This 207-nucleotide RNA was probed chemically with DMS and 2A3.
[RMDB]
RNA sequence: GGGAACGACUCGAGUAGAGUCGAAAACUACCACAAACCUGGGUGGCUUAGAACACAGAAUUUCUUUUUCUUACAGUUCUGGAGGUUAGAAGUCUGAAAUCAAGGUGUUGGCAGGGCCGUGCUUCCUCAGAAGGCUCUUGGGAAGAAUUCUUUCCUGUCCAAUACGACGAUUCGUCGUCGUAUUGGAAAAAGAAACAACAACAACAAC
Reactivity to DMS in 0.01 (KOAc 150mM, MgCl2 10mM, bicine 150mM(pH8.5), 24C), signal-to-noise 2, nucleotides 027 to 156: c020u010a300c020c010a060c090a060a060a060c040c040u020g040g040g050u010g000g010c030u010u000a070g030a060a090c020a080c060a030g000a070a060u000u000u000c030u000u000u010u010u040c110u050u000a140c080a080g000u000u000c030u010g040g030a080g020g000u000u000a060g010a020a000g010u020c010u000g010a070a080a050u010c070a250a170g010g020u000g040u010u010g000g000c030a100g010g020g060c050c040g000u000g010c020u000u010c000c020u010c080a140g010a070a130g010g000c020u010c040u000u010g000g070g010a080a080g000a070a130u010u000c070u000u000u000c060c020u010g010
Reactivity to 2A3 in 0.01 (KOAc 150mM, MgCl2 10mM, bicine 150mM(pH8.5), 24C), signal-to-noise 2, nucleotides 027 to 156: c010u020a050c010c000a010c030a040a090a040c000c010u010g020g000g040u020g010g020c000u050u080a040g030a070a010c020a020c010a060g050a120a110u030u190u090c050u050u240u090u140u060c020u050u280a090c050a040g000u050u000c010u050g050g000a090g110g000u040u000a040g030a030a000g040u010c080u160g060a040a010a090u070c050a040a040g020g000u020g040u080u070g030g040c020a020g010g000g050c030c000g000u020g030c010u000u020c000c020u030c000a040g020a110a030g130g000c080u000c000u020u050g030g000g000a050a010g030a040a090u130u020c010u020u020u010c010c030u040g100
The data come from the RNA Mapping Database (RMDB), library OK3TST. For DMS, 2,945 sequencing reads were counted. The RNA was probed in 150 mM KOAc, 10 mM MgCl2 and 150 mM bicine (pH 8.5) at 24 C.